[RMDB]
RNA sequence: GGGAACGACUCGAGUAGAGUCGAAAAGAUAUGGAGGCUGUAGUGUUGACGGGCGUUCGGAAACGAACGAUCCGAAGGCUACUGCCUCCUAAGUCAAAACGCAAGGACACUUCGGUGUCCUUGCGAAUCCAUAGGUGACGUUCGCGUCACCUAUGGAAAAAGAAACAACAACAACAAC
Reactivity to 2A3 in 0.01 (KOAc 150mM, MgCl2 10mM, bicine 150mM(pH8.5), 24C), signal-to-noise 2, nucleotides 027 to 126: g000a010u010a020u050g000g000a000g000g010c030u030g000u000a010g000u070g100u300u300g130a030c000g030g000g010c010g010u010u000c010g000g030a040a030a000c020g000a010a010c010g020a110u000c010c020g020a080a070g300g000c020u000a000c000u010g000c010c000u000c000c000u000a000a000g010u000c000a010a040a040a070c030g000c000a010a010g010g020a010c020a000c020u080u240c300g060g000u010g010u020c000c000u000u000g000c000g000a000a000
Reactivity to DMS in 0.01 (KOAc 150mM, MgCl2 10mM, bicine 150mM(pH8.5), 24C), signal-to-noise 1, nucleotides 027 to 126: g000a000u000a030u010g000g010a020g000g000c000u010g000u000a000g060u000g020u020u010g010a090c040g000g000g000c010g020u010u010c000g020g010a010a000a000c000g010a010a010c020g000a030u020c000c000g020a050a050g000g000c000u000a000c000u000g000c000c000u010c000c000u000a000a050g000u000c000a120a060a140a190c040g010c010a030a010g010g010a020c000a010c000u000u030c200g030g020u000g010u000c000c000u000u000g000c000g000a010a040